[RMDB]
RNA sequence: GGGAACGACUCGAGUAGAGUCGAAAAUUGCGUCGUUCCGGAAAAGUCGCUUGCGUCGUUCCGGAAAAGUCGCUUGCGUCGUUCCGGAAAAGUCGCUUGCGUCGUUCCGGAAAAGUCGCCGUGCCGUAAAGAUGUCUCUUCGGAGACAUCUUUACGGGUUGAAGGCAUUCUUCGGAAUGCCUUCAACAAAAGAAACAACAACAACAAC
Reactivity to 2A3 in 0.01 (KOAc 150mM, MgCl2 10mM, bicine 150mM(pH8.5), 24C), signal-to-noise 1, nucleotides 027 to 156: u120u050g010c020g000u010c010g020u030u000c000c030g020g000a040a050a030a040g020u010c020g010c010u010u010g000c000g030u010c010g040u060u010c000c010g010g000a090a040a030a100g020u060c000g030c110u060u190g020c010g030u010c000g000u020u020c010c010g020g000a060a040a020a070g010u020c000g010c010u000u010g000c000g000u000c010g000u020u030c000c010g000g000a020a010a030a020g010u030c000g000c060c020g100u100g050c020c000g000u000a000a000a000g000a000u020g000u010c010u020c000u040u140c270g010g000a000g000a000c000a000u000c000u000u000u000a000c000g000g000